[RMDB]
RNA sequence: GGGAACGACUCGAGUAGAGUCGAAAAGAUAUGGAUUCCUUGUAGGGAGCUUACGAUCGGAAACGAUCGGGGAGCAUCGAUCUAUGGGAAUCCUAAGUCAAAAGUUGGCUUGUUCGCAAGCCAACAACCUAGAGUACUUCUUCGGAAGUACUCUAGGAAAAGAAACAACAACAACAAC
Reactivity to DMS in 0.01 (KOAc 150mM, MgCl2 10mM, bicine 150mM(pH8.5), 24C), signal-to-noise 3, nucleotides 027 to 126: g010a030u000a120u010g000g000a000u000u010c000c000u010u010g070u010a010g010g000g010a110g020c000u000u010a150c000g000a000u010c000g020g000a030a030a060c000g010a010u010c000g010g010g020g010a010g010c010a230u010c250g000a100u000c000u000a020u000g010g000g000a020a010u000c000c000u000a010a060g010u010c010a110a090a080a130g010u000u000g000g010c000u000u000g020u000u010c250g020c020a010a010g020c000c000a000a000c000a070a070
Reactivity to 2A3 in 0.01 (KOAc 150mM, MgCl2 10mM, bicine 150mM(pH8.5), 24C), signal-to-noise 3, nucleotides 027 to 126: g000a000u020a020u070g000g000a000u000u020c020c000u080u210g040u040a040g050g120g100a220g020c000u020u010a010c020g010a010u020c010g000g000a020a020a010c010g020a010u010c030g000g010g080g010a020g000c010a020u300c220g160a150u000c010u010a020u040g000g000g010a000a010u000c000c000u000a010a010g020u000c010a050a000a060a180g000u010u010g000g010c000u010u020g000u080u130c300g030c170a000a000g000c000c000a000a000c000a000a010

This 177-nucleotide RNA was probed chemically with DMS and 2A3.
The reactions ran in a buffer of 150 mM KOAc, 10 mM MgCl2 and 150 mM bicine (pH 8.5), at 24 C.
The data come from the RNA Mapping Database (RMDB), library TTRDES.